The data come from the RNA Mapping Database (RMDB), library M2RFPK. The record gives the reactivity of an RNA of 207 nucleotides to 2A3 and DMS. For DMS, 6,626 sequencing reads were counted. Reactivities are rounded to 0.1 and cut off at 0 and 3. The RNA was probed in 150 mM KOAc, 10 mM MgCl2 and 150 mM bicine (pH 8.5) at 24 C.
[RMDB]
RNA sequence: GGGAACGACUCGAGUAGAGUCGAAAACGCACUCGCAGCUUAAUAACCUGCGCUGAGCCCUUCUCCCCCAGCUUGCCUGUGUCCUAGGGAAUUGGAAAGUCAUCCUUCACAGGAUCGUGUGGAAGUCAUUACUCGUGAGUGUUCGCACUCACGAGAACAGUGUAAAAAUGUUCGCAUUUUUACACUGAAAAGAAACAACAACAACAAC
Reactivity to 2A3 in 0.01 (KOAc 150mM, MgCl2 10mM, bicine 150mM(pH8.5), 24C), signal-to-noise 3, nucleotides 027 to 156: c030g000c000a030c030u020c000g010c000a000g000c000u040u020a020a000u030a070a020c000c000u000g000c000g020c160u050g050a040g010c010c020c000u160u070c110u050c000c000c000c000c000a010g010c030u050u120g030c010c000u020g010u000g020u050c000c040u030a020g040g030g040a110a080u100u060g010g040a100a060a030g040u080c010a040u040c010c010u040u060c020a020c000a040g020g040a060u090c060g020u070g020u070g110g060a060a040g060u060c040a080u100u130a130c010u000c010g000u000g000a010g000u010g000u020u040c050g020c010a000c000u000c010a020c000g000a000g000a000a000
Reactivity to DMS in 0.01 (KOAc 150mM, MgCl2 10mM, bicine 150mM(pH8.5), 24C), signal-to-noise 3, nucleotides 027 to 156: c080g030c050a120c050u000c040g000c010a030g010c030u010u000a130a150u000a140a120c300c010u000g040c000g010c170u010g010a070g010c000c030c050u020u000c060u000c010c000c040c030c030a120g020c020u020u020g010c030c020u010g010u010g010u000c030c030u000a100g010g020g020a060a090u000u010g020g000a060a080a130g020u000c040a110u000c030c010u000u000c060a100c040a050g000g000a050u000c070g000u000g020u000g010g010a080a220g010u000c050a120u000u000a160c020u000c000g030u010g000a030g020u000g030u000u010c300g030c010a050c010u000c000a010c000g010a010g010a020a120